[RMDB]
RNA sequence: GGGAACGACUCGAGUAGAGUCGAAAACAAGGAUAAAACCUUUUUCCCGUCAGGGGCCGGUUGUUUUUUAAAACAAGUUUGGUUAGUUGGCCCGGCCUAAUCAAAGUCCGGAAUAUGAUGGGAAACCCUCUAAUGACUAGUUCGCUGGUCGUUAGAGAAAAGAAACAACAACAACAAC
Reactivity to DMS in 0.01 (KOAc 150mM, MgCl2 10mM, bicine 150mM(pH8.5), 24C), signal-to-noise 5, nucleotides 027 to 126: c100a030a010g000g010a080u010a070a090a200a190c000c000u000u000u000u000u000c000c000c000g020u000c010a020g030g060g010g020c010c010g000g010u020u010g010u000u000u010u080u060u040a050a060a020a030c030a050a100g020u000u010u000g000g010u000u000a020g000u010u020g000g010c010c000c000g000g000c250c000u000a010a010u000c020a020a020a050g020u040c010c000g000g000a040a040u020a090u010g000a010u010g000g000g000a010a020a040c090c040
Reactivity to 2A3 in 0.01 (KOAc 150mM, MgCl2 10mM, bicine 150mM(pH8.5), 24C), signal-to-noise 9, nucleotides 027 to 126: c030a010a010g020g010a030u110a140a120a070a120c010c000u040u030u000u010u000c000c000c000g000u000c000a020g030g080g190g020c000c010g020g010u030u010g040u020u040u020u020u060u180a110a160a010a010c030a060a060g030u010u020u020g010g000u000u010a010g010u020u100g070g000c000c010c010g010g010c000c000u000a010a000u010c000a010a010a010g080u030c000c000g010g080a020a020u280a030u060g000a010u010g000g000g000a010a010a010c000c000